Structure probing data (DMS and 2A3) for a 177-nucleotide construct. For 2A3 the reverse transcriptase was SuperScript II with manganese. It was measured as part of the RMDB library TTRINS.
[RMDB]
RNA sequence: GGGAACGACUCGAGUAGAGUCGAAAAGAUAUGGAGUCAGGAACUACGUAGUCAGCUCGUUGAAAAUUAUGUAUAUCGGAAACGAUAUACAUAAUUGGAGAGCUGUCUACGCCUGACUCCUAAGUCACCAUAGUAUGACCUUCGGGUCAUACUAUGGAAAAGAAACAACAACAACAAC
Reactivity to DMS in 0.01 (KOAc 150mM, MgCl2 10mM, bicine 150mM(pH8.5), 24C), signal-to-noise 3, nucleotides 027 to 126: g000a050u000a300u010g010g010a000g020u010c000a000g000g000a130a070c150u040a300c020g020u000a010g000u000c000a000g010c000u000c000g040u000u020g020a220a100a010a010u000u000a000u000g010u000a000u010a010u000c000g010g000a120a120a210c000g030a010u020a000u000a000c000a000u000a000a000u000u000g000g010a160g000a010g020c000u000g010u000c000u000a000c000g000c000c000u000g020a020c000u000c000c010u000a000a060g000u010c040a230
Reactivity to 2A3 in 0.01 (KOAc 150mM, MgCl2 10mM, bicine 150mM(pH8.5), 24C), signal-to-noise 2, nucleotides 027 to 126: g040a020u110a040u230g000g010a010g020u000c000a000g010g020a120a130c190u230a050c300g010u000a000g030u020c000a000g000c010u010c020g110u140u090g030a180a180a000a020u000u010a010u000g000u000a000u000a000u010c010g030g000a050a060a050c000g010a010u020a000u010a000c000a010u000a000a010u000u000g000g030a030g000a000g020c010u000g000u050c000u000a000c000g000c000c000u000g010a000c010u010c000c000u000a000a010g000u000c000a020

Reactivities are rounded to 0.1 and cut off at 0 and 3. 2A3 is a SHAPE reagent: it acylates the 2'-hydroxyl of flexible nucleotides of all four kinds.